[RMDB]
An RNA of 177 nucleotides, treated with 2A3 and DMS and read out base by base. Conditions: 150 mM KOAc, 10 mM MgCl2 and 150 mM bicine (pH 8.5), 24 C.
RNA sequence: GGGAACGACUCGAGUAGAGUCGAAAAAUUGCGCACGGCCACCUUCCGCUCAGACCGGCGCGGAGGUGUAGCGAUAGGACAGCAGCGUUUUCACCAGGAAGGUGAUCUGGGUGGCCGAGCGCGCAUCUUAAUUUCGUCAAUUCGUUGACGAAAUUAAAAAAGAAACAACAACAACAAC
Reactivity to 2A3 in 0.01 (KOAc 150mM, MgCl2 10mM, bicine 150mM(pH8.5), 24C), signal-to-noise 7, nucleotides 027 to 126: a000u100u100g000c000g000c000a010c010g000g000c000c000a000c000c000u010u020c010c000g020c000u020c030a090g080a230c000c020g010g000c020g000c010g010g000a010g000g010u030g010u010a020g010c010g050a060u150a170g130g070a050c050a080g070c020a010g020c040g020u080u040u070u080c010a000c000c000a010g080g080a150a240g070g070u240g070a040u040c000u030g000g000g000u000g000g000c020c000g000a030g010c070g000c000g000c000a020u020c010
Reactivity to DMS in 0.01 (KOAc 150mM, MgCl2 10mM, bicine 150mM(pH8.5), 24C), signal-to-noise 4, nucleotides 027 to 126: a070u020u010g000c010g020c000a120c020g010g000c000c000a010c000c010u010u020c100c010g020c010u000c050a120g010a090c070c030g010g010c300g010c010g000g000a060g010g000u010g010u010a030g010c010g000a080u020a130g020g010a090c110a090g020c110a090g010c080g020u020u000u010u000c010a010c000c000a140g010g020a100a080g030g030u020g010a040u010c070u010g010g010g010u000g000g010c000c000g010a050g000c050g010c010g020c190a040u030c110
As a SHAPE reagent, 2A3 marks flexible, mostly unpaired nucleotides at the ribose 2'-OH.